[RMDB]
RNA sequence: GGGAACGACUCGAGUAGAGUCGAAAAACCUAUCGAAAGGGAAUGUAGUUAAGAUUCUACAACUGGGAUGCAGAUUUUCAGCGGUAACGCAUAUGAACUUGGUGACAUUGGCAUGGGCCCUAGGAAACCUUCUCUAGAGGUUCGCCUCUAGAGAAGGAAAAGAAACAACAACAACAAC
Reactivity to 2A3 in 0.01 (KOAc 150mM, MgCl2 10mM, bicine 150mM(pH8.5), 24C), signal-to-noise 4, nucleotides 027 to 126: a000c040c000u050a080u090c100g100a070a080a040g090g030g010a100a110u050g020u050a020g020u060u100a100a080g050a260u150u030c030u030a000c040a040a060c070u050g000g000g050a010u040g020c020a040g060a190u030u060u000u120c030a030g010c000g040g000u070a050a080c020g020c040a010u060a080u160g070a040a030c030u050u060g010g020u030g060a010c030a100u010u060g020g020c040a040u010g080g030g000c000c000c000u010a050g000g060a020a040a000
Reactivity to DMS in 0.01 (KOAc 150mM, MgCl2 10mM, bicine 150mM(pH8.5), 24C), signal-to-noise 3, nucleotides 027 to 126: a080c010c000u010a040u020c060g020a080a110a060g010g010g000a090a080u000g000u000a020g000u000u010a080a160g010a190u000u010c020u010a030c030a070a150c060u000g000g000g000a070u000g000c040a060g030a140u010u020u010u000c060a070g000c100g010g000u030a050a120c100g010c010a060u010a090u000g000a050a060c070u000u010g010g010u010g000a060c080a050u000u020g000g000c040a080u010g010g010g000c020c020c020u010a040g010g000a050a030a110

This 177-nucleotide RNA was probed chemically with 2A3 and DMS. DMS adducts were read by reverse transcription with MarathonRT. For 2A3 the reverse transcriptase was SuperScript II with manganese. The RNA was probed in 150 mM KOAc, 10 mM MgCl2 and 150 mM bicine (pH 8.5) at 24 C. It was measured as part of the RMDB libraries RFM100 and RFMREP.